[RMDB]
RNA sequence: GGGAACGACUCGAGUAGAGUCGAAAAAUGUGAAACCAAAACAUCUGCAUUCGUGUAUGUUCAACCUGACAGCUUCGCUUACCCUUUUGUUAAGCUAUAAGACACUCUUCCAGGUGUAUGCAACAAACUCUCGUAACACGUUCGCGUGUUACGAGAGAAAAGAAACAACAACAACAAC
Reactivity to DMS in 0.01 (KOAc 150mM, MgCl2 10mM, bicine 150mM(pH8.5), 24C), signal-to-noise 1, nucleotides 027 to 126: a050u060g000u000g000a220a050a170c000c060a020a070a090a230c080a020u000c000u000g000c100a060u010u000c200g040u050g000u020a060u000g000u020u000c020a070a180c010c000u000g000a010c060a140g000c060u000u000c010g000c000u000u000a080c000c060c040u000u000u090u000g050u060u040a010a180g000c120u040a080u060a120a010g000a050c000a060c060u000c050u010u010c080c060a000g010g000u020g000u000a070u000g000c190a050a060c220a010a040a100
Reactivity to 2A3 in 0.01 (KOAc 150mM, MgCl2 10mM, bicine 150mM(pH8.5), 24C), signal-to-noise 3, nucleotides 027 to 126: a000u220g110u070g090a200a000a000c070c060a060a050a000a040c020a060u060c020u030g010c010a090u000u060c040g000u030g070u040a090u110g070u030u090c020a060a050c040c070u090g050a040c010a070g010c010u060u030c020g040c030u050u240a210c010c000c000u060u080u010u140g120u060u020a020a000g000c000u010a020u000a140a030g040a000c000a020c020u050c000u070u020c040c020a030g000g000u010g010u010a030u110g060c000a040a030c000a020a110a000